Source: RMDB library M2PK90, as collected in RNAgym. Structure probing data (DMS and 2A3) for a 177-nucleotide construct.
RNA sequence: GGGAACGACUCGAGUAGAGUCGAAAAAAAAAGCACGCGAAGCACGCGAAGCACGCGAAGCACGCGAAGCACGCGAAGCUCGCGAAGCACGCGAAGCACGCGAAGCACGCGAAGCACGCGAAAAAAAGUAAUUAGGAUUGUUCGCAAUCCUAAUUACAAAAGAAACAACAACAACAAC
Reactivity to DMS in 0.01 (KOAc 150mM, MgCl2 10mM, bicine 150mM(pH8.5), 24C), signal-to-noise 2, nucleotides 027 to 126: a040a100a100a040a190g030c130a130c100g030c020g090a120a140g040c010a180c000g010c030g020a200a160g020c010a140c030g000c000g000a080a130g010c060a150c000g010c000g000a060a210g080c050a190c020g060c060g000a050a110g020c020u000c000g010c000g010a090a070g090c090a120c050g000c000g000a000a110g000c040a170c050g000c000g020a070a120g000c070a050c020g000c000g000a090a070g040c140a110c040g000c010g000a000a000a010a160a060a090a040
Reactivity to 2A3 in 0.01 (KOAc 150mM, MgCl2 10mM, bicine 150mM(pH8.5), 24C), signal-to-noise 2, nucleotides 027 to 126: a000a000a000a000a000g050c040a040c000g000c000g040a080a010g010c030a010c040g020c000g040a080a020g050c040a010c030g000c000g040a070a030g000c020a010c030g020c010g040a060a020g030c030a020c020g000c000g040a020a030g050c020u010c010g000c000g030a050a030g040c020a000c030g000c000g050a030a020g050c020a000c000g020c000g030a040a000g030c030a010c030g000c010g030a050a000g020c020a000c010g000c010g150a160a000a000a000a000a000a010